[RMDB]
RNA sequence: GGGAACGACUCGAGUAGAGUCGAAAAUAAAAUCGUAGGGCGAGACGAUCGACGUAAAUCGCUCAAACUACUCGAGACCAAAGGAAUACGCUUCCGUAACUCGCUCUAAUCCCGAGCGAUAAAUGAAGAGAACGGAUUUAUUCGUAAAUCCGUUCUCAAAAGAAACAACAACAACAAC
Reactivity to DMS in 0.01 (KOAc 150mM, MgCl2 10mM, bicine 150mM(pH8.5), 24C), signal-to-noise 2, nucleotides 027 to 126: u000a070a120a120a130u000c000g050u000a110g010g000g000c080g000a070g040a030c000g020a170u010c100g010a090c050g000u020a010a040a110u000c020g020c020u000c010a060a170a080c060u010a010c000u000c010g030a000g010a110c090c110a080a080a100g010g010a060a050u000a120c110g040c080u000u000c010c000g000u010a150a090c170u000c040g010c000u000c000u000a040a140u000c030c020c070g000a040g010c010g000a010u000a060a100a040u010g000a120a070
Reactivity to 2A3 in 0.01 (KOAc 150mM, MgCl2 10mM, bicine 150mM(pH8.5), 24C), signal-to-noise 2, nucleotides 027 to 126: u060a000a030a000a080u040c040g000u060a140g010g010g000c010g010a010g020a070c030g050a140u180c100g160a140c030g030u040a010a120a170u010c010g000c000u020c030a030a060a000c010u020a010c000u000c010g000a010g010a060c040c000a080a050a050g040g020a050a020u100a110c090g000c110u000u010c010c010g020u040a070a070c020u020c010g010c000u000c010u030a050a100u050c010c030c030g000a010g000c010g030a020u100a090a100a080u150g050a120a060